[RMDB]
RNA sequence: GGGAACGACUCGAGUAGAGUCGAAAAACGGGCCGGCUACUCUUCUUUCCCUUCUCUCGUCUUCCUCGGUCAACCUCUUGAGUUCCUCUUCUUCCUCCCUGCUGAGGUUCUUCCCUCCUCCAGAAAGCCCAUCAUUUAACUUCGGUUAAAUGAUGGGAAAAGAAACAACAACAACAAC
Reactivity to DMS in 0.01 (KOAc 150mM, MgCl2 10mM, bicine 150mM(pH8.5), 24C), signal-to-noise 1, nucleotides 027 to 126: a100c100g000g010g020c010c020g000g010c020u010a030c080u000c020u010u020c040u010u010u010c030c010c010u010u010c050u010c020u000c030g010u000c020u010u010c030c010u010c040g010g000u000c100a110a080c030c030u010c030u010u000g000a150g020u000u000c030c020u020c070u010u000c030u010u000c010c020u010c000c030c030u000g000c060u000g010a130g010g000u010u010c050u000u000c030c010c000u000c060c000u000c010c040a100g010a050a150a190g010

Background
The record gives the reactivity of an RNA of 177 nucleotides to DMS.